[RMDB]
RNA sequence: GGGAACGACUCGAGUAGAGUCGAAAAAUAAAUAAAGCGCACCAAUAUGGAGGUGCGCAACCAGCCUGACCUAGGAACACGCAUCCACGCGUCUACUAAGACGCGAAAGGUAUUCCAAAUAAAAAAACAUUUACGUGAUGUUCGCAUCACGUAAAUGAAAAGAAACAACAACAACAAC
Reactivity to DMS in 0.01 (KOAc 150mM, MgCl2 10mM, bicine 150mM(pH8.5), 24C), signal-to-noise 1, nucleotides 027 to 126: a020u000a000a030a110u000a020a110a180g000c030g010c030a000c000c000a060a230u000a140u060g000g000a180g000g020u000g000c000g000c000a000a000c080c050a110g050c020c030u000g020a080c110c080u000a150g000g000a030a020c050a050c040g020c120a140u060c080c020a290c000g000c020g020u000c010u030a120c300u000a120a020g000a000c000g000c000g000a000a000a000g020g000u000a030u000u000c000c040a090a070a140u000a050a020a090a140a050a050a170
Reactivity to 2A3 in 0.01 (KOAc 150mM, MgCl2 10mM, bicine 150mM(pH8.5), 24C), signal-to-noise 1, nucleotides 027 to 126: a000u030a010a040a010u120a020a150a000g000c010g000c000a010c000c010a070a020u160a180u300g080g010a070g000g000u000g010c020g010c010a010a010c000c000a000g030c000c010u070g030a090c030c000u040a030g000g030a010a000c010a010c130g080c040a020u070c030c030a000c090g000c000g000u020c010u010a100c050u070a090a070g010a010c010g010c000g000a080a030a000g060g010u030a070u010u010c000c000a080a120a030u120a050a120a040a000a010a020a050